[RMDB]
RNA sequence: GGGAACGACUCGAGUAGAGUCGAAAACGGUCGAAAUUCGUUUCGACCGAAUAUGCUAGCUGAGCACAGCUGCAAUGCUAAGCUGAAAGCCAGCUGCAACCGCGAGUUCGGCGUUCGCGCCGAACAAGUCACCAAUGGUAUUCGUACCAUUGGUGACAAAAGAAACAACAACAACAAC
Reactivity to 2A3 in 0.01 (KOAc 150mM, MgCl2 10mM, bicine 150mM(pH8.5), 24C), signal-to-noise 3, nucleotides 027 to 126: c000g000g000u010c000g010a010a000a010u120u100c170g050u020u010u010c000g000a000c000c000g000a000a020u090a030u040g020c090u130a020g000c000u010g020a010g060c010a010c010a220g010c000u040g000c090a150a090u170g030c030u120a090a030g000c010u010g030a170a020a010g000c020c000a010g000c000u010g000c000a030a020c010c020g070c060g060a080g110u000u000c010g000g000c010g040u010u060c200g000c000g000c060c000g000a000a000c000a000a010
Reactivity to DMS in 0.01 (KOAc 150mM, MgCl2 10mM, bicine 150mM(pH8.5), 24C), signal-to-noise 3, nucleotides 027 to 126: c010g000g030u000c000g030a000a000a050u000u010c240g020u000u000u000c010g020a020c020c000g020a020a020u000a090u000g000c010u020a020g010c000u010g020a120g030c000a130c030a010g000c000u000g000c100a080a110u000g000c150u010a130a030g000c010u000g000a100a120a100g010c010c000a020g040c000u000g000c030a050a160c050c020g000c210g010a180g000u000u000c000g000g000c010g020u010u000c140g000c020g010c000c000g000a010a000c010a040a080
An RNA of 177 nucleotides, treated with 2A3 and DMS and read out base by base. Source: RMDB library M2PK50, as collected in RNAgym. High 2A3 reactivity points to a flexible backbone, as in loops and unpaired stretches. Reactivities are given for positions 27 through 126. For DMS the reverse transcriptase was MarathonRT. Conditions: 150 mM KOAc, 10 mM MgCl2 and 150 mM bicine (pH 8.5), 24 C. The 2A3 profile rests on 7,670 reads.